The data come from the RNA Mapping Database (RMDB), library OK1LIB. This 177-nucleotide RNA was probed chemically with 2A3 and DMS. Reactivities are given for positions 27 through 126. For 2A3, 44,575 sequencing reads were counted.
RNA sequence: GGGAACGACUCGAGUAGAGUCGAAAAGGUGGCUCCAACUGGCGACAGUUGUCUCGUGACAUGGAGUCACCGAUUUAGCAUGUUCGUCCUACGAAGUCCCGUGACGCGGUGUAGGACGUUCAUGCGAGGGAUCCUGUACCUUCGGGUAUAGGAUCCCAAAAGAAACAACAACAACAAC
Reactivity to 2A3 in 0.01 (KOAc 150mM, MgCl2 10mM, bicine 150mM(pH8.5), 24C), signal-to-noise 9, nucleotides 027 to 126: g000g010u000g000g000c000u010c000c010a070a060c110u100g050g010c020g020a030c040a150g110u180u100g060u140c040u020c050g120u120g060a050c020a090u070g000g000a000g000u000c000a000c000c000g000a000u000u010u070a020g000c000a000u000g000u010u000c000g000u000c000c000u000a010c020g080a150a050g240u150c020c020c020g090u180g100a070c120g010c060g050g020u100g000u020a000g000g000a000c000g000u000u000c000a000u000g000c000g000a090
Reactivity to DMS in 0.01 (KOAc 150mM, MgCl2 10mM, bicine 150mM(pH8.5), 24C), signal-to-noise 7, nucleotides 027 to 126: g010g010u010g010g010c010u010c010c000a190a080c070u010g000g000c230g000a130c030a080g010u010u030g000u010c060u030c210g010u030g010a050c070a200u020g020g000a010g000u000c000a020c000c000g000a030u030u020u020a120g010c000a000u010g000u010u000c000g010u000c000c000u000a000c010g010a160a170g010u030c080c040c080g010u030g000a070c110g010c100g010g000u090g000u000a000g010g000a000c000g000u000u000c000a000u000g000c000g000a100